[RMDB]
RNA sequence: GGGAACGACUCGAGUAGAGUCGAAAAGAUAUGGACAGUCAUCGAUCUACGCUGCGUUUGACGUCGGAAACGACCGAGCAGCGUAGGGAGACUGUCCUAAGUCAAAAUCGUACCUUCGGGUACGAAAGAUUACACGCGAGUUCGCUCGCGUGUAAUCAAAAGAAACAACAACAACAAC
Reactivity to 2A3 in 0.01 (KOAc 150mM, MgCl2 10mM, bicine 150mM(pH8.5), 24C), signal-to-noise 2, nucleotides 027 to 126: g000a000u100a040u220g000g010a000c000a000g000u000c020a240u300c110g100a060u000c010u010a000c010g000c020u020g020c040g200u090u210u250g110a090c050g020u000c000g030g040a090a080a040c000g030a000c020c010g020a010g000c010a000g000c000g010u000a000g000g020g010a020g010a000c000u010g000u000c000c000u010a030a000g030u000c030a010a020a020a200u040c000g000u010a020c010c000u010u070c300g120g000g000u000a010c000g010a010a010a000
Reactivity to DMS in 0.01 (KOAc 150mM, MgCl2 10mM, bicine 150mM(pH8.5), 24C), signal-to-noise 2, nucleotides 027 to 126: g000a040u000a300u000g000g010a000c000a020g010u010c000a240u010c180g000a060u030c010u000a000c020g000c000u000g000c010g010u030u000u010g020a080c300g000u000c000g010g010a080a110a140c000g010a000c000c000g000a060g010c000a000g000c000g000u000a000g000g000g000a040g010a000c000u000g000u000c010c000u000a020a070g010u010c010a070a090a110a110u000c000g000u000a020c000c000u000u020c270g010g010g040u050a000c000g000a000a050a080

Description
Chemical mapping of a 177-nucleotide RNA with 2A3 and DMS. For 2A3 the reverse transcriptase was SuperScript II with manganese. Values are in units of 0.01, from 0 to 300, in steps of 10. DMS adducts were read by reverse transcription with MarathonRT. Conditions: 150 mM KOAc, 10 mM MgCl2 and 150 mM bicine (pH 8.5), 24 C.